[RMDB]
Chemical mapping of a 177-nucleotide RNA with 2A3. The data come from the RNA Mapping Database (RMDB), library OK1LIB. The RNA was probed in 150 mM KOAc, 10 mM MgCl2 and 150 mM bicine (pH 8.5) at 24 C.

RNA sequence: GGGAACGACUCGAGUAGAGUCGAAAAUCAUCGACGGUCAGGAUCACUCGGCGGACUUCAUCAAUCUUGAACUCAUCGAUUCACCAACGCUUCCGACCUGUGAGCGGAUCGCGGUGCUCAGCCAGUCAGACCCGGUAGCAUUCGUGCUACCGGGUCUAAAAGAAACAACAACAACAAC
Reactivity to 2A3 in 0.01 (KOAc 150mM, MgCl2 10mM, bicine 150mM(pH8.5), 24C), signal-to-noise 2, nucleotides 027 to 126: u070c030a060u110c060g100a040c050g100g000u050c050a000g000g040a200u060c000a000c050u060c090g000g000c030g000g040a080c020u110u000c080a060u050c000a000a100u070c000u030u030g140a070a070c050u040c100a060u030c050g030a030u140u110c060a050c090c000a040a170c030g000c100u000u010c120c060g000a300c030c030u030g080u060g240a030g010c000g000g050a030u040c060g020c050g030g000u030g000c000u000c030a030g020c000c000a060g090u020c000